This 177-nucleotide RNA was probed chemically with DMS and 2A3.

RNA sequence: GGGAACGACUCGAGUAGAGUCGAAAACGCUGUCUCAACCAUGGACCCGGUGAAAUUCCACUAGUCGUGAAGAUGCGACUUACCCGCGGAAGGACGGAAAGACCCCGUGAACCUUCACUGCAGCUUGCUUACCCGAUUUGUUCGCAAAUCGGGUAAGAAAAGAAACAACAACAACAAC
Reactivity to DMS in 0.01 (KOAc 150mM, MgCl2 10mM, bicine 150mM(pH8.5), 24C), signal-to-noise 3, nucleotides 027 to 126: c110g000c050u000g010u050c010u000c030a060a090c030c030a040u020g010g000a160c040c040c040g030g010u000g010a070a110a130u020u000c030c000a070c130u000a060g030u020c020g010u030g000a200a070g020a170u020g010c000g020a060c060u010u010a060c050c010c040g010c060g010g020a070a040g000g010a100c000g000g000a060a120a120g000a120c110c040c000c020g010u020g010a020a130c000c020u000u000c010a080c100u020g020c060a050g020c040u000u000g000
Reactivity to 2A3 in 0.01 (KOAc 150mM, MgCl2 10mM, bicine 150mM(pH8.5), 24C), signal-to-noise 6, nucleotides 027 to 126: c020g000c040u060g020u060c010u020c050a070a070c020c030a060u050g080g040a030c010c030c030g000g010u060g050a070a060a070u140u030c040c010a030c070u040a010g020u010c030g030u020g110a210a060g110a100u180g040c010g000a000c000u020u060a080c000c020c010g010c040g040g010a020a030g030g020a040c020g010g040a040a130a020g090a070c000c000c000c000g010u020g050a040a070c010c000u040u060c050a040c040u070g020c000a030g020c000u070u080g020

Reactivities are given for positions 27 through 126.